[RMDB]
RNA sequence: GGGAACGACUCGAGUAGAGUCGAAAAGAUAUGGAGUAGCACCCGAUACUAGUCUUUUGACGGAAUUGAUAUCGGAAACGAUAUUGGUUCCGAUAAGACUACAUGUAUCGGGUGCUACUCCUAAGUCCCUAGUAUUGACCUUCGGGUCAAUACUAGGAAAAGAAACAACAACAACAAC
Reactivity to DMS in 0.01 (KOAc 150mM, MgCl2 10mM, bicine 150mM(pH8.5), 24C), signal-to-noise 2, nucleotides 027 to 126: g000a080u010a300u000g000g020a010g000u000a000g000c000a010c000c000c000g000a020u000a000c020u010a030g010u010c000u000u000u010u000g030a300c090g000g000a010a010u000u000g010a000u000a010u000c010g000g010a120a140a140c000g010a020u000a010u000u000g000g010u000u000c000c000g000a060u010a020a010g010a010c000u000a050c300a100u010g010u000a000u030c000g000g010g010u000g000c010u000a000c000u010c000c000u000a010a080g000u000c030
Overview:
The record gives the reactivity of an RNA of 177 nucleotides to DMS.